Source: RMDB library RFM100, as collected in RNAgym. Chemical mapping of a 177-nucleotide RNA with DMS and 2A3. Reactivities are given for positions 27 through 126. The DMS profile rests on 1,152 reads. The reactions ran in a buffer of 150 mM KOAc, 10 mM MgCl2 and 150 mM bicine (pH 8.5), at 24 C.

RNA sequence: GGGAACGACUCGAGUAGAGUCGAAAACUAAAUAAGUCUUGAUAAAUCAAUAUUUAUUGAUGUUACAAGGCUUUAUUUCUUCAGUUUUCAUCACGUUUAACUAGUAAUAGUGACCUUUGAAUAACUCCAAAGAUCCGUACUUCGGUACGGAUCUUUGAAAAGAAACAACAACAACAAC
Reactivity to DMS in 0.01 (KOAc 150mM, MgCl2 10mM, bicine 150mM(pH8.5), 24C), signal-to-noise 1, nucleotides 027 to 126: c030u000a000a030a010u000a000a000g020u010c000u000u020g000a220u000a020a030a020u020c000a030a000u000a130u080u000u000a040u050u000g000a000u010g000u010u010a050c020a020a000g020g010c000u000u000u020a030u000u020u000c100u040u120c160a030g010u000u000u000u000c060a150u000c060a050c300g000u000u000u020a100a050c030u000a000g010u080a120a180u000a040g000u000g010a020c110c170u000u020u000g010a040a020u030a050a090c020u000c300
Reactivity to 2A3 in 0.01 (KOAc 150mM, MgCl2 10mM, bicine 150mM(pH8.5), 24C), signal-to-noise 2, nucleotides 027 to 126: c040u040a020a020a030u030a000a020g030u000c000u000u030g020a060u080a030a050a000u000c010a010a000u020a130u160u270u210a030u000u110g000a010u010g060u240u070a010c000a000a000g020g000c000u000u030u000a000u000u030u020c090u090u100c070a030g000u000u000u000u040c020a040u010c010a020c070g020u000u080u090a100a040c010u040a010g100u140a070a150u010a120g030u020g020a050c000c000u040u020u010g000a020a010u000a120a000c010u060c030